[RMDB]
Conditions: 150 mM KOAc, 10 mM MgCl2 and 150 mM bicine (pH 8.5), 24 C. The record gives the reactivity of an RNA of 207 nucleotides to DMS and 2A3.
RNA sequence: GGGAACGACUCGAGUAGAGUCGAAAACAUAAUUAUUGGACAUCCAUCUUUUCUUACUUGUCUCUGAGCACCAUGAGAGCAGGAAGCAUGUCUUAAUUAUUUGGGUGCCCUGCUUGUAAACAGUGACUCCUUACCCCUGUAUCUCACACCAGGAAUACCAUAAAACUUUAUUCGUAAAGUUUUAUGGAAAAGAAACAACAACAACAAC
Reactivity to DMS in 0.01 (KOAc 150mM, MgCl2 10mM, bicine 150mM(pH8.5), 24C), signal-to-noise 2, nucleotides 027 to 156: c050a080u020a060a090u000u010a070u000u010g020g010a100c040a070u000c010c070a140u000c060u000u000u020u000c040u000u000a060c020u010u000g010u000c000u010c060u000g020a200g000c000a080c040c050a110u020g010a290g000a030g000c010a060g030g000a060a120g080c020a060u000g040u000c020u000u010a020a110u000u000a180u050u000u000g000g040g060u000g020c030c000c000u000g030c010u000u010g000u000a130a040a070c060a050g020u020g000a120c030u000c020c030u010u000a080c060c020c020c020u000g020u000a070u000c030u000c020a040c020a040c070c010a160g000g000a060a060u030a100
Reactivity to 2A3 in 0.01 (KOAc 150mM, MgCl2 10mM, bicine 150mM(pH8.5), 24C), signal-to-noise 6, nucleotides 027 to 156: c020a020u240a120a120u260u210a090u110u130g050g010a020c010a040u040c030c010a080u020c140u070u200u110u040c030u060u070a140c030u060u090g030u020c030u000c030u080g050a020g040c020a040c040c010a060u100g050a030g000a010g100c010a000g010g020a070a050g010c010a020u040g100u080c010u090u120a200a160u180u160a220u130u160u090g060g010g000u010g000c000c000c000u010g010c000u040u070g070u150a040a050a050c020a030g020u030g120a110c020u030c010c010u030u090a110c000c020c000c000u010g020u040a050u040c030u010c030a030c000a020c070c010a000g020g060a060a050u160a070

Reactivities are given for positions 27 through 156. For 2A3, 3,652 sequencing reads were counted.